[RMDB]
RNA sequence: GGGAACGACUCGAGUAGAGUCGAAAAAUUAAAAGCUUUAAAAUUAAUCAUCUUGAACUUGAUACAAUAUAGUACAGCACUUUGAAAAUGAAUCAUCUGCUAGUUCAGUAUUUUCUAAUUACAAUCAACAUAAGUUGAUGUUCGCAUCAACUUAUGUAAAAGAAACAACAACAACAAC
Reactivity to 2A3 in 0.01 (KOAc 150mM, MgCl2 10mM, bicine 150mM(pH8.5), 24C), signal-to-noise 4, nucleotides 027 to 126: a000u130u130a010a070a090a030g050c070u210u160u120a050a100a100a080u160u110a030a040u130c010a050u020c020u070u050g010a010a010c010u030u090g050a020u090a060c030a070a110u140a050u140a180g040u020a050c050a010g010c010a070c090u060u040u060g050a110a080a070a170u140g020a110a040u050c000a030u010c010u050g010c020u050a010g020u040u000c000a000g010u030a050u010u100u020u000c020u010a020a000u030u030a070c080a010a110u050c050a070
Reactivity to DMS in 0.01 (KOAc 150mM, MgCl2 10mM, bicine 150mM(pH8.5), 24C), signal-to-noise 2, nucleotides 027 to 126: a090u030u030a090a050a150a070g030c170u000u000u000a030a040a060a050u000u000a030a060u010c040a050u020c030u020u020g000a000a040c070u020u030g000a110u010a040c020a070a090u020a100u000a100g000u000a050c040a040g000c010a030c150u020u000u000g000a090a110a120a060u010g020a100a100u000c000a020u010c070u000g010c020u000a030g020u010u000c010a040g000u010a060u010u000u000u000c050u010a020a030u010u000a090c120a100a120u040c110a070